[RMDB]
RNA sequence: GGGAACGACUCGAGUAGAGUCGAAAAGCUUAGAUCAAGUGUAGUAUCUGUUCUUUUCAGUUUAAUCUCUGAAAGUGUUCCAUAGGAACACAACAUUGAUUAAUCUUAUUUUUGGUCUCCGUGGCAGUUCCUCCCUAGUGUUCGCACUAGGGAGGAAAAAAGAAACAACAACAACAAC
Reactivity to DMS in 0.01 (KOAc 150mM, MgCl2 10mM, bicine 150mM(pH8.5), 24C), signal-to-noise 1, nucleotides 027 to 126: g000c080u010u010a030g000a010u000c060a020a120g020u000g050u020a050g070u070a040u000c070u000g000u000u010c010u100u000u010u050c010a190g000u040u000u010a000a000u000c010u010c010u060g010a060a290a050g000u010g000u000u000c000c000a170u020a300g040g070a070a000c010a010c020a000a300c040a010u000u000g010a000u010u000a000a000u010c010u000u060a090u000u000u000u000u000g000g000u000c000u010c040c060g010u000g000g070c030a130g000
Reactivity to 2A3 in 0.01 (KOAc 150mM, MgCl2 10mM, bicine 150mM(pH8.5), 24C), signal-to-noise 2, nucleotides 027 to 126: g020c020u070u080a000g020a010u120c030a100a000g040u020g080u110a080g050u070a060u060c080u030g130u070u080c060u120u060u050u100c000a000g010u000u020u020a000a010u000c000u000c000u010g060a090a080a160g030u000g000u000u000c020c000a050u100a120g010g000a000a000c000a000c000a000a000c000a010u010u000g020a000u010u030a020a000u010c020u040u120a100u070u110u000u080u060g030g000u000c000u000c030c010g080u090g030g000c050a040g010
Chemical mapping of a 177-nucleotide RNA with DMS and 2A3. DMS (dimethyl sulfate) methylates the pairing face of unpaired adenines and cytosines. Values are in units of 0.01, from 0 to 300, in steps of 10. 2A3 adducts were read by reverse transcription with SuperScript II with manganese.